[RMDB]
The record gives the reactivity of an RNA of 177 nucleotides to DMS and 2A3. The reactions ran in a buffer of 150 mM KOAc, 10 mM MgCl2 and 150 mM bicine (pH 8.5), at 24 C.

RNA sequence: GGGAACGACUCGAGUAGAGUCGAAAAGAUAUGGAUGUGUACGUGCCAGAAUGUUAUCGGAAACGAUAAAUUCGGUAAUACGUAACAUCCUAAGUCAAAACCACGACAUAGUUCGCUAUGUCGUGGAGGAGAUGAUAGCGUUCGCGCUAUCAUCUCCAAAAGAAACAACAACAACAAC
Reactivity to DMS in 0.01 (KOAc 150mM, MgCl2 10mM, bicine 150mM(pH8.5), 24C), signal-to-noise 1, nucleotides 027 to 126: g030a010u010a300u000g010g020a000u000g040u000g000u000a000c010g060u000g010c170c040a270g010a010a000u000g010u010u000a000u000c000g000g020a060a090a100c000g010a010u000a000a010a030u000u000c020g000g000u000a100a120u010a100c000g000u000a030a010c040a020u000c000c000u010a010a030g010u000c010a150a090a120a250c000c000a000c010g000a000c060a000u000a000g000u000u020c300g000c020u000a010u010g000u000c000g010u020g000g000a040
Reactivity to 2A3 in 0.01 (KOAc 150mM, MgCl2 10mM, bicine 150mM(pH8.5), 24C), signal-to-noise 3, nucleotides 027 to 126: g030a000u050a030u150g010g000a000u000g080u090g110u070a000c020g020u020g130c140c060a050g090a010a010u300g040u300u010a000u000c010g000g040a060a030a030c030g010a000u010a010a000a000u020u030c010g000g130u210a300a150u230a210c000g010u000a000a000c020a010u000c010c010u020a060a000g040u020c030a030a080a090a100c000c010a000c010g000a000c000a010u020a000g020u030u080c300g030c190u020a000u020g010u020c000g000u000g000g010a060
The 2A3 profile rests on 3,441 reads.